[RMDB]
RNA sequence: GGGAACGACUCGAGUAGAGUCGAAAACAGAGCUGAUGGGCCAUGUACCUAUCCAAAGUGAGAUCCCAUCUUGCACACUGUGCUAAUUUGAGAUUCUCAUGCCUCCUACUUGGAGAGAUCUGGACUACUAACUGUAUGACGUUCGCGUCAUACAGAAGAAUGCACCAAGCUUCGGCUUGGUGCAUUCAAAAGAAACAACAACAACAAC
Reactivity to 2A3 in 0.01 (KOAc 150mM, MgCl2 10mM, bicine 150mM(pH8.5), 24C), signal-to-noise 2, nucleotides 027 to 156: c000a010g050a010g060c040u040g050a060u110g010g000g070c120c160a160u170g050u170a090c010c000u010a000u000c010c090a000a000a150g000u010g000a000g000a020u010c010c000c000a000u010c020u000u000g000c030a040c040a100c240u220g000u020g050c030u150a080a070u010u060u010g030a050g000a010u240u090c000u030c020a020u070g040c010c000u000c000c000u040a190c070u130u280g000g000a020g000a000g000a100u040c000u060g030g010a040c020u090a060c000u070a260a060c000u010g010u000a000u000g000a000c000g000u020u000c140g010c000g060u000c000a000u000a020c020a000g000a000a000

Structure probing data (2A3) for a 207-nucleotide construct. The 2A3 profile rests on 813 reads. Source: RMDB library M2RFPK, as collected in RNAgym. Values cover nucleotides 27 to 156. Conditions: 150 mM KOAc, 10 mM MgCl2 and 150 mM bicine (pH 8.5), 24 C. High 2A3 reactivity points to a flexible backbone, as in loops and unpaired stretches.